[RMDB]
RNA sequence: GGGAACGACUCGAGUAGAGUCGAAAAGUGGAGAUGAGGAAGGGAGGCAGAGCUAUCUUGGCACAGAGCUCGGGCACCCAGCCCAGGCAGGGACUCAGAAGGUCUCCGUGUCUGUGCGGAGCCAAAGGAUAUUGUUGGGGCUUUGAGCUAGUGCCUACUCGACUCAGUAUUUCGAUACUGAGUCGAGAAAAGAAACAACAACAACAAC
Reactivity to 2A3 in 0.01 (KOAc 150mM, MgCl2 10mM, bicine 150mM(pH8.5), 24C), signal-to-noise 1, nucleotides 027 to 156: g080u100g020g000a040g010a100u150g000a010g050g010a030a030g020g010g020a010g040g020c000a010g010a000g020c010u030a070u180c000u010u080g010g010c000a030c070a080g130a030g030c000u010c000g010g000g020c060a300c160c000c010a000g030c040c000c000a000g000g060c010a020g020g020g060a070c020u100c080a150g030a250a020g090g030u020c000u000c040c030g100u020g020u020c090u120g040u060g070c000g060g000a020g000c010c000a080a080a000g160g000a020u110a080u200u210g040u060u020g000g000g000g000c000u030u110u300g000a000g000c000u030a030g000u000g000c000c000u010a040